Structure probing data (2A3 and DMS) for a 177-nucleotide construct. Conditions: 150 mM KOAc, 10 mM MgCl2 and 150 mM bicine (pH 8.5), 24 C. 2A3 adducts were read by reverse transcription with SuperScript II with manganese. For 2A3, 3,074 sequencing reads were counted. DMS adducts were read by reverse transcription with MarathonRT.

RNA sequence: GGGAACGACUCGAGUAGAGUCGAAAAUCGUGAGAUGUGGUGCCUCACGCGCUCGAGGCGUCCGUGGUCAGAGAGACCACUGACGCAAAAACUCGAGCGCAAAUAAAAGGCAUUACAUUGAGAAUAACGCAUUAUGGUAUUUCGAUACCAUAAUGCGAAAAGAAACAACAACAACAAC
Reactivity to 2A3 in 0.01 (KOAc 150mM, MgCl2 10mM, bicine 150mM(pH8.5), 24C), signal-to-noise 2, nucleotides 027 to 126: u130c060g040u080g090a150g000a010u000g000u000g000g010u000g000c010c000u030c010a080c110g000c000g000c000u000c000g000a010g030g000c000g000u000c010c010g000u010g000g000u000c030a050g100a100g020a020g010a300c000c010a000c000u000g000a010c000g000c010a050a100a050a030a050c000u000c010g000a000g000c000g000c000a000a000a000u110a000a090a020a000g000g010c000a000u010u010a000c000a000u020u030g000a020g040a090a150u180a120a000
Reactivity to DMS in 0.01 (KOAc 150mM, MgCl2 10mM, bicine 150mM(pH8.5), 24C), signal-to-noise 2, nucleotides 027 to 126: u000c040g010u000g020a110g010a000u000g000u000g040g030u000g000c040c000u000c100a280c220g010c010g000c000u000c000g010a010g010g000c000g000u000c000c090g000u000g000g000u010c030a240g050a180g000a130g000a030c000c000a000c000u000g020a000c010g140c000a050a010a050a150a300c000u000c000g000a000g020c010g000c030a000a050a080u020a140a020a080a020g000g000c000a000u000u000a000c000a010u000u010g000a110g000a040a080u040a140a170